[RMDB]
RNA sequence: GGGAACGACUCGAGUAGAGUCGAAAAAGUCUGAUUAUCGCAUUCAAUUCUGCAUGAUAUCAGGACCUGUAAUGUGAUAUCAGUGCGAUAGCAUGCAGGUUUGAGACGCCGCAUUUUGUAUCGUCUAGAUAAUGUUUAAUUUCGAUUGGACAUUAUCAAAAGAAACAACAACAACAAC
Reactivity to 2A3 in 0.01 (KOAc 150mM, MgCl2 10mM, bicine 150mM(pH8.5), 24C), signal-to-noise 9, nucleotides 027 to 126: a000g120u040c040u040g040a090u080u210a060u130c040g010c050a030u050u060c020a040a080u080u040c020u030g030c020a070u120g030a050u070a030u100c020a030g080g060a080c020c020u020g060u120a100a140u130g070u070g170a050u040a030u140c030a020g070u050g160c030g010a010u010a010g030c010a000u010g000c030a050g010g000u020u040u090g080a050g010a020c040g020c040c010g060c040a050u070u110u060u150g060u020a050u070c040g020u000c050u020a040
Reactivity to DMS in 0.01 (KOAc 150mM, MgCl2 10mM, bicine 150mM(pH8.5), 24C), signal-to-noise 9, nucleotides 027 to 126: a070g010u010c020u000g000a060u010u010a030u010c060g020c060a070u010u000c030a040a070u010u010c020u010g000c090a040u000g010a050u020a050u010c010a050g020g000a090c160c050u010g000u020a050a060u020g020u020g010a090u010a050u010c010a030g010u020g010c060g000a010u000a020g000c060a010u000g010c000a040g010g010u000u000u000g000a070g010a070c110g000c050c050g000c080a080u020u010u010u010g020u000a040u000c030g000u010c050u000a080